[RMDB]
RNA sequence: GGGAACGACUCGAGUAGAGUCGAAAAACUAGUAUGUACAGGGGUGAGUUGACCUGUCAUCUAGACUGCUGAUCAUCAACUCACCGGUCAGCUGGAUGAUGUCCACAGAGUACGACAUCAGUACUCAGUGUAAUGAUGCGUUCGCGUAUCGUUACACAAAAGAAACAACAACAACAAC
Reactivity to DMS in 0.01 (KOAc 150mM, MgCl2 10mM, bicine 150mM(pH8.5), 24C), signal-to-noise 9, nucleotides 027 to 126: a130c010u000a020g010u020a030u010g010u060a020c010a040g010g010g000g020u010g000a030g020u000u000g000a040c100c050u010g000u000c010a050u020c070u010a080g010a120c090u010g000c070u010g000a050u020c250a180u010c040a020a020c030u000c020a030c040c040g000g000u000c010a030g000c010u000g000g000a090u010g010a080u020g000u010c020c030a100c190a110g000a040g000u000a020c030g000a130c170a090u040c120a080g000u000a010c010u000c010a150
Reactivity to 2A3 in 0.01 (KOAc 150mM, MgCl2 10mM, bicine 150mM(pH8.5), 24C), signal-to-noise 9, nucleotides 027 to 126: a000c010u010a010g030u080a130u220g060u090a010c010a030g170g040g010g050u060g040a050g020u030u040g050a050c010c020u020g010u020c000a020u030c010u020a050g080a120c050u050g030c030u030g020a050u030c030a000u020c010a030a040c020u010c030a020c000c020g000g000u000c000a000g000c010u020g020g030a080u090g020a030u090g080u040c010c010a060c050a070g020a000g010u030a010c040g090a030c100a160u140c050a050g010u010a010c000u000c030a010
An RNA of 177 nucleotides, treated with DMS and 2A3 and read out base by base. Reactivities are given for positions 27 through 126. Source: RMDB library OK1LIB, as collected in RNAgym.